This 177-nucleotide RNA was probed chemically with 2A3 and DMS. Source: RMDB libraries RFM100 and RFMREP, as collected in RNAgym. Conditions: 150 mM KOAc, 10 mM MgCl2 and 150 mM bicine (pH 8.5), 24 C.
RNA sequence: GGGAACGACUCGAGUAGAGUCGAAAAACACGCCAGGUACGCCUGGCGUGAGUUUUUAGGGAAAAUCUGGCCUUCCCACAAGGGGAGGCCAGGGAAUUUUCAUACGUCGCAGGUACGCCUGCGACGACGAAUGCCUUGUAUUCGUACAAGGCAUUCGAAAAGAAACAACAACAACAAC
Reactivity to 2A3 in 0.01 (KOAc 150mM, MgCl2 10mM, bicine 150mM(pH8.5), 24C), signal-to-noise 3, nucleotides 027 to 126: a000c000a000c000g010c010c000a000g020g000u090a080c290g060c030c000u000g000g030c000g000u010g000a010g000u070u050u010u020u080a100g010g000g020a000a010a000a010u040c000u000g000g010c000c000u010u000c010c130c010a070c160a160a270g000g000g000g000a010g000g000c000c000a000g000g000g000a000a000u000u000u010u010c000a000u050a100c010g000u000c000g000c010a000g040g000u040a030c300g070c020c000u000g000c000g000a000c000g000a010
Reactivity to DMS in 0.01 (KOAc 150mM, MgCl2 10mM, bicine 150mM(pH8.5), 24C), signal-to-noise 2, nucleotides 027 to 126: a110c000a010c020g000c000c000a020g010g000u010a120c300g020c030c000u000g000g000c010g020u000g000a020g020u000u000u000u010u000a080g000g000g000a020a000a010a050u010c000u000g000g000c010c010u010u000c000c010c000a110c300a090a100g000g010g010g000a020g000g010c010c010a000g000g010g010a090a040u000u000u000u010c000a080u010a100c020g040u000c000g010c000a020g000g020u000a100c220g010c010c010u000g010c000g000a000c010g000a070